RNA sequence: GGGAACGACUCGAGUAGAGUCGAAAAAUGGUGACGCCGUCCGGACCUAUCCAGGCAGGGCUGUCCUGAGCUUCGACGGGAGAAUUGACAGCAGCCCUCCAGCAGCUCAUUCGCCCUUUGACGCCGGUCUACCUAGGGCGUUCGCGCCCUGGGUAGGAAAAGAAACAACAACAACAAC
Reactivity to DMS in 0.01 (KOAc 150mM, MgCl2 10mM, bicine 150mM(pH8.5), 24C), signal-to-noise 7, nucleotides 027 to 126: a070u020g000g030u010g010a090c070g010c030c030g000u000c040c040g010g010a090c050c040u010a090u030c050c050a070g010g020c110a050g000g000g000c020u010g000u020c060c060u000g000a150g000c020u000u010c040g020a150c180g000g000g000a060g000a080a080u020u020g020a140c120a070g010c040a080g000c030c020c010u010c050c040a120g000c060a080g000c030u000c030a060u010u000c040g000c000c000c010u000u010u000g000a070c060g000c020c030g010g000
Reactivity to 2A3 in 0.01 (KOAc 150mM, MgCl2 10mM, bicine 150mM(pH8.5), 24C), signal-to-noise 8, nucleotides 027 to 126: a000u160g030g030u070g040a030c040g020c050c010g050u040c010c010g040g050a090c010c020u060a100u060c020c020a020g040g000c030a010g010g020g000c020u030g020u050c010c020u050g010a040g020c000u040u040c020g120a120c050g060g060g020a040g040a050a110u130u120g080a050c040a030g020c010a010g000c000c000c000u010c010c000a020g010c010a010g000c000u000c010a050u080u040c020g000c000c000c000u010u040u070g040a030c020g010c010c000g010g000